[RMDB]
RNA sequence: GGGAACGACUCGAGUAGAGUCGAAAACGCGGAUACUUCGGUAUCCGCGAAAGAAGCGAAGGCGUACCGAAAUAAAACGGUAAUAAAUCGGAAAACGCCUAAAAAGCCUAGACUUCGGUCUAGGCAAGUCAAAAUACUAGUUCGCUAGUAUUUUGACAAAAGAAACAACAACAACAAC
Reactivity to DMS in 0.01 (KOAc 150mM, MgCl2 10mM, bicine 150mM(pH8.5), 24C), signal-to-noise 3, nucleotides 027 to 126: c010g010c000g010g010a010u000a000c000u000u010c170g050g030u000a010u010c000c000g020c000g000a010a010a080g010a170a110g010c170g000a130a030g010g020c010g020u000a100c000c000g000a030a050a160u020a050a070a080a120c130g010g000u000a050a060u010a040a130a190u000c020g010g000a080a050a100a050c010g000c000c000u010a020a040a110a130a040g000c000c000u000a000g000a010c000u000u000c160g020g010u000c000u000a000g000g010c000a010a020
Reactivity to 2A3 in 0.01 (KOAc 150mM, MgCl2 10mM, bicine 150mM(pH8.5), 24C), signal-to-noise 3, nucleotides 027 to 126: c010g010c010g010g000a000u010a010c010u020u060c160g040g010u000a010u010c010c000g000c000g000a000a000a000g030a070a030g100c080g070a060a010g010g010c010g000u020a100c000c010g030a000a060a040u150a030a110a020a020c100g030g030u020a020a040u060a060a120a030u030c010g000g000a030a270a030a010c010g000c010c000u020a040a030a010a010a000g000c000c000u000a000g000a010c000u010u040c280g040g010u020c000u000a000g000g000c000a000a000